[RMDB]
RNA sequence: GGGAACGACUCGAGUAGAGUCGAAAACAACAAAACAAAACGGGCCACGGAAAGAAAACCGAAAGGCACGCAAAGAUCAUGCAAGUACGAGAGCGUCGCCGGCACCGAAUCGUACUAAACAAACAAACGCCAGUGCUAAUUUCGAUUAGCACUGGCGAAAAGAAACAACAACAACAAC
Reactivity to 2A3 in 0.01 (KOAc 150mM, MgCl2 10mM, bicine 150mM(pH8.5), 24C), signal-to-noise 1, nucleotides 027 to 126: c000a000a010c010a000a110a000a070c090a000a130a000a000c030g030g000g000c010c000a020c000g030g030a170a000a000g200a060a160a090a000c070c000g140a140a010a000g010g000c000a000c000g000c040a070a110a020g120a110u170c080a050u110g060c150a080a020g120u080a000c030g050a000g000a000g000c050g060u110c040g020c010c010g010g020c010a000c000c000g000a030a060u000c000g000u000a000c040u040a000a040a000c090a040a130a000c070a030a070a040